[RMDB]
RNA sequence: GGGAACGACUCGAGUAGAGUCGAAAAUUACACUCAUGUCGACGCAUAUCAUAGAUAAUAACAAUGAUUAUGGGACAGGUUAAGACCUGGCAUCAGUAGAAUCCGGCUAGAAGGAAGCGAGCGCGAACCAGUUUGACACUUUCGAGUGUCGAAUUGGAAAAGAAACAACAACAACAAC
Reactivity to 2A3 in 0.01 (KOAc 150mM, MgCl2 10mM, bicine 150mM(pH8.5), 24C), signal-to-noise 9, nucleotides 027 to 126: u060u030a030c030a010c030u020c020a040u040g020u010c020g050a040c020g010c050a020u010a000u040c000a000u020a050g110a040u090a170a050u110a140a040c070a050a060u050g020a020u030u110a010u060g030g000g040a030c010a010g010g010u020u050a060a010g070a030c000c000u000g000g000c010a030u030c030a030g070u110a020g080a050a040u030c020c010g030g030c020u030a030g040a090a030g130g020a030a010g020c010g010a010g000c030g000c010g020a010a030
Reactivity to DMS in 0.01 (KOAc 150mM, MgCl2 10mM, bicine 150mM(pH8.5), 24C), signal-to-noise 9, nucleotides 027 to 126: u020u020a090c120a100c030u010c080a060u010g010u000c030g020a120c080g000c020a040u010a030u010c010a030u000a080g010a080u030a100a080u030a120a110c140a090a050u000g000a020u010u020a030u010g000g000g010a090c060a020g000g010u000u010a090a060g010a120c010c010u000g000g000c040a050u010c080a040g000u010a050g010a060a070u010c030c020g000g000c020u010a040g000a110a100g000g000a080a050g010c040g010a030g010c040g010c060g010a070a170
An RNA of 177 nucleotides, treated with 2A3 and DMS and read out base by base.
DMS adducts were read by reverse transcription with MarathonRT.
It was measured as part of the RMDB library OK1LIB.
For 2A3 the reverse transcriptase was SuperScript II with manganese.
For 2A3, 34,286 sequencing reads were counted.
The RNA was probed in 150 mM KOAc, 10 mM MgCl2 and 150 mM bicine (pH 8.5) at 24 C.